This 207-nucleotide RNA was probed chemically with DMS and 2A3.
[RMDB]
RNA sequence: GGGAACGACUCGAGUAGAGUCGAAAACGCAGAGGGUUCUGAUAACAAAGAACCUAGAUAGCCGCAUCGGUAUUAUAGGAUGUAGUCGGUGAGCCGGAAUGCCUGCAUCGUAAGCCUAUGAGUAAAUUUAAGUGUAAUCACUUCGGUGAUUACACAACGUACUAUGCAUGUUCGCAUGCAUAGUACGAAAAGAAACAACAACAACAAC
Reactivity to DMS in 0.01 (KOAc 150mM, MgCl2 10mM, bicine 150mM(pH8.5), 24C), signal-to-noise 2, nucleotides 027 to 156: c080g020c020a090g000a300g010g000g020u000u000c010u000g010a150u010a110a210c300a110a220a100g000a050a010c020c000u000a030g000a220u000a180g010c030c050g000c030a060u010c050g010g010u000a020u000u010a130u000a140g050g000a080u000g070u000a030g000u010c050g000g070u000g030a110g000c000c000g000g040a120a130u000g030c070c020u000g040c000a110u010c010g000u000a050a120g000c000c020u000a060u000g010a070g000u000a030a030a070u010u000u000a120a100g020u000g020u000a000a000u010c000a010c000u000u000c280g040g000u020g000a020u010u000a000c000a010c010a000a050
Reactivity to 2A3 in 0.01 (KOAc 150mM, MgCl2 10mM, bicine 150mM(pH8.5), 24C), signal-to-noise 5, nucleotides 027 to 156: c090g010c030a050g040a130g060g000g030u000u010c010u020g070a100u080a210a060c030a040a110a010g000a000a000c000c000u010a020g020a080u120a020g020c030c040g020c030a030u070c060g030g010u070a120u280u100a050u120a100g090g020a030u030g020u020a020g090u110c030g000g040u070g080a060g030c010c030g010g100a140a060u140g060c010c020u020g000c020a020u020c020g050u010a020a010g000c000c010u030a040u060g040a050g050u140a030a130a210u200u240u110a170a020g000u000g000u000a000a000u000c000a010c020u020u060c160g010g010u000g000a000u000u000a000c000a000c000a000a000
For 2A3 the reverse transcriptase was SuperScript II with manganese. DMS adducts were read by reverse transcription with MarathonRT. Source: RMDB library M2RFPK, as collected in RNAgym. Conditions: 150 mM KOAc, 10 mM MgCl2 and 150 mM bicine (pH 8.5), 24 C. For DMS, 2,524 sequencing reads were counted.